[RMDB]
RNA sequence: GGGAACGACUCGAGUAGAGUCGAAAAGCAUAACUGUUCGCAGUUAUGCAAAACACGAAGCUGGAAACUGACGCAGUGAAACAAACAAAAGCGAAAACAAAAAAAGCCAACAGUUCGCUGUUGGCAACUCAUUUAACGGGUUCGCCCGUUAAAUGAGAAAAGAAACAACAACAACAAC
Reactivity to DMS in 0.01 (KOAc 150mM, MgCl2 10mM, bicine 150mM(pH8.5), 24C), signal-to-noise 1, nucleotides 027 to 126: g010c000a010u020a000a000c000u010g010u000u010c070g030c000a020g050u020u000a000u000g020c010a010a040a080a050c020a070c140g040a060a170g000c070u000g000g020a080a120a080c110u000g000a070c060g000c030a110g010u020g030a040a060a070c070a070a080a140c160a030a040a070a080g000c070g000a030a020a050a080c140a030a020a080a130a110a060a080g010c010c000a000a010c000a000g010u000u010c190g060c000u000g030u000u000g000g000c000a000a000
Reactivity to 2A3 in 0.01 (KOAc 150mM, MgCl2 10mM, bicine 150mM(pH8.5), 24C), signal-to-noise 1, nucleotides 027 to 126: g000c000a000u010a010a000c000u010g020u100u060c140g000c040a000g010u000u010a000u000g010c000a000a040a050a050c080a000c060g020a060a020g000c050u070g030g050a110a090a140c080u060g090a030c050g000c070a020g010u010g090a120a110a030c050a040a110a030c010a040a160a010a000g030c040g110a010a110a000a040c090a020a130a040a060a020a010a000g000c000c000a000a000c000a020g060u120u200c250g000c160u020g010u020u020g000g070c000a000a000

Structure probing data (DMS and 2A3) for a 177-nucleotide construct. DMS adducts were read by reverse transcription with MarathonRT. The RNA was probed in 150 mM KOAc, 10 mM MgCl2 and 150 mM bicine (pH 8.5) at 24 C. The data come from the RNA Mapping Database (RMDB), library M2PK50.